An RNA of 177 nucleotides, treated with 2A3 and read out base by base. The RNA was probed in 150 mM KOAc, 10 mM MgCl2 and 150 mM bicine (pH 8.5) at 24 C.

RNA sequence: GGGAACGACUCGAGUAGAGUCGAAAAACUGGCUACGGCCAGAUUGAGGCCUUGCAGGCUGCAAAGCAGCAUUGAUCAUGCAAGGCCGACUUGCCGCCGAACACAGUGAGGGGGCGUUACCAAAAAAGUGUCCCAGACUUUUCGAAGUCUGGGACACAAAAGAAACAACAACAACAAC
Reactivity to 2A3 in 0.01 (KOAc 150mM, MgCl2 10mM, bicine 150mM(pH8.5), 24C), signal-to-noise 2, nucleotides 027 to 126: a000c010u010g010g000c010u070a040c160g100g000c010c000a000g000a000u000u060g040a000g000g000c000c000u020u020g000c060a050g010g050c000u020g000c090a160a160a090g000c000a000g000c000a030u000u300g050a090u300c180a160u050g000c000a000a000g000g000c000c000g000a000c000u020u070g000c000c010g160c030c000g030a090a000c290a040c040a250g000u070g100a140g000g000g000g000g000c010g000u070u140a060c000c000a080a000a000a000a000a080